Background
Structure probing data (DMS) for a 177-nucleotide construct. The RNA was probed in 150 mM KOAc, 10 mM MgCl2 and 150 mM bicine (pH 8.5) at 24 C. Reactivities are rounded to 0.1 and cut off at 0 and 3. For DMS, 2,205 sequencing reads were counted.
RNA sequence: GGGAACGACUCGAGUAGAGUCGAAAAGAUAUGGAUGCCAUCCAGGCAACAGCUGGACUGGGUCGGAAACGACCUUCCAGACAUGCCUGGGUGGCAUCCUAAGUCAAAACUCGGCUUCGGCCGAGAAGAAGGAAGAAGGGUUCGCCCUUCUUCCUUCAAAAGAAACAACAACAACAAC
Reactivity to DMS in 0.01 (KOAc 150mM, MgCl2 10mM, bicine 150mM(pH8.5), 24C), signal-to-noise 3, nucleotides 027 to 126: g000a020u000a300u000g010g020a020u000g010c020c020a000u000c000c000a000g000g020c000a060a030c300a150g000c010u000g000g040a040c300u000g010g010g000u000c000g000g000a130a120a280c010g020a020c010c010u000u000c010c000a000g010a050c070a130u000g010c020c000u000g000g010g010u000g000g000c000a000u000c000c000u010a010a060g000u010c020a050a050a080a170c010u000c000g010g010c000u000u020c230g040g010c000c000g000a020g020a030a070